RNA sequence: GGGAACGACUCGAGUAGAGUCGAAAACCUCCCCCCGAGAGGGGAAGAGUGAGGCUUAUCCCGGGGAACCCGGCGAAUGCCCCCACAUAGCAGAGUCCGGGACCCCCUCCUAAAAGACCGAGGGGGGUGAGCAAGGAGUUCGCUCCUUGCAAAAGAAACAACAACAACAAC
Reactivity to DMS in 0.01 (KOAc 150mM, MgCl2 10mM, bicine 150mM(pH8.5), 24C), signal-to-noise 7, nucleotides 027 to 129: c000c000u000c000c000c000c000c000c000g000a140g000a170g030g040g010g010a040a020g010a150g010u030g020a030g010g010c040u020u030a110u040c000c000c000g010g020g000g020a140a150c040c000c020g010g010c020g050a200a070u030g000c020c020c030c020c030a060c130a080u040a050g060c030a020g020a160g040u040c010c020g000g000g000a210c020c030c000c000c020u030c010c030u050a090a050a110a120g050a090c110c140g010a070g020g020g030g000g020g020u030g020a090
Reactivity to 2A3 in 0.01 (KOAc 150mM, MgCl2 10mM, bicine 150mM(pH8.5), 24C), signal-to-noise 8, nucleotides 027 to 129: c010c000u000c000c000c000c000c000c000g040a030g030a080g110g010g030g010a050a020g110a010g040u300g020a010g010g000c010u060u080a070u090c000c000c000g020g000g010g000a060a040c000c000c000g010g000c020g040a160a070u090g000c010c000c000c010c010a210c070a100u140a010g030c020a000g030a020g140u040c000c000g000g000g010a030c000c000c000c000c000u010c000c000u090a120a100a040a030g090a030c060c050g000a020g010g000g000g000g000g010u030g020a000